The record gives the reactivity of an RNA of 207 nucleotides to 2A3 and DMS. Conditions: 150 mM KOAc, 10 mM MgCl2 and 150 mM bicine (pH 8.5), 24 C. The 2A3 profile rests on 3,855 reads. For DMS, 6,730 sequencing reads were counted.
RNA sequence: GGGAACGACUCGAGUAGAGUCGAAAAACCCAUGAACCAUGUCAGGUCCUGACGGAAGCAGCAUUAAGUGGAUCAUCAUAUGUGCCGUAGGGUAGCCGAGAUUUAGCUAACGACUUUGGUUACGUUCGUGAAUUACGUUCGAUGCUUAGGUGCACGGGCACAUUGUAUAGUUCGCUAUACAAUGUGCAAAAGAAACAACAACAACAAC
Reactivity to 2A3 in 0.01 (KOAc 150mM, MgCl2 10mM, bicine 150mM(pH8.5), 24C), signal-to-noise 6, nucleotides 027 to 156: a000c000c000c000a020u080g060a020a040c050c020a030u090g030u050c020a030g000g090u100c030c020u060g050a060c040g020g020a080a010g030c050a000g000c020a060u090u150a230a040g020u040g080g040a060u050c020a030u020c010a020u080a040u160g050u050g020c000c020g040u050a030g020g010g040u030a020g060c020c060g040a040g010a040u040u100u170a020g030c040u020a040a060c040g060a020c020u090u110u110g050g020u100u090a040c030g020u020u040c010g020u020g080a100a070u160u060a070c040g010u030u040c010g040a070u050g010c000u060u110a080g070g050u100g010c020a020c050g010g050
Reactivity to DMS in 0.01 (KOAc 150mM, MgCl2 10mM, bicine 150mM(pH8.5), 24C), signal-to-noise 3, nucleotides 027 to 156: a120c000c000c030a170u000g020a080a070c050c020a150u000g000u000c060a120g020g010u000c050c020u010g020a150c060g020g010a150a120g010c040a050g000c030a080u000u010a040a140g040u000g010g000a120u000c060a100u010c060a100u000a090u010g010u000g020c040c020g010u000a060g040g030g040u000a020g060c040c010g020a100g010a080u000u000u000a060g010c090u010a100a110c060g000a050c000u000u000u000g010g030u010u000a080c050g010u010u000c070g010u000g000a070a080u000u000a080c110g010u010u000c020g020a140u000g000c010u000u000a120g010g030u010g020c020a100c060g010g000